[RMDB]
RNA sequence: GGGAACGACUCGAGUAGAGUCGAAAAGAUAUGGACAUGACUCGCGUAACAAUUUUCCCGAUGAAAGCAUCGGAAACGAUGCUGGAGGGAAAAUUGUUACGAACUACGAGCAAUGUGUCCUAAGUCAGAUUUCCUAAAACUUCGGUUUUAGGAAAUCAAAAGAAACAACAACAACAAC
Reactivity to DMS in 0.01 (KOAc 150mM, MgCl2 10mM, bicine 150mM(pH8.5), 24C), signal-to-noise 2, nucleotides 027 to 126: g000a050u020a300u010g010g010a030c010a010u000g000a120c000u000c010g000c000g000u000a000a010c010a010a010u000u000u000u000c000c000c000g000a150u020g000a280a150a030g010c000a000u010c000g010g010a090a110a250c000g010a020u000g010c010u000g000g020a050g000g000g000a000a000a010a010u000u000g010u000u000a000c000g000a030a050c160u010a300c040g000a010g000c150a090a070u010g020u000g010u000c020c000u020a080a180g010u000c100a170
Reactivity to 2A3 in 0.01 (KOAc 150mM, MgCl2 10mM, bicine 150mM(pH8.5), 24C), signal-to-noise 1, nucleotides 027 to 126: g050a000u110a080u240g000g000a000c010a030u100g210a220c030u020c000g030c000g030u010a020a000c010a000a000u040u000u010u000c010c010c030g040a300u060g000a000a030a000g000c020a000u020c000g000g120a130a120a030c000g000a000u000g000c020u010g000g000a000g060g000g040a000a000a010a000u000u000g000u010u000a000c000g000a010a000c000u090a040c020g020a000g000c060a070a140u200g010u000g000u000c010c000u050a240a020g040u040c020a040

Source information:
The record gives the reactivity of an RNA of 177 nucleotides to DMS and 2A3. Source: RMDB library TTRINS, as collected in RNAgym. For 2A3 the reverse transcriptase was SuperScript II with manganese.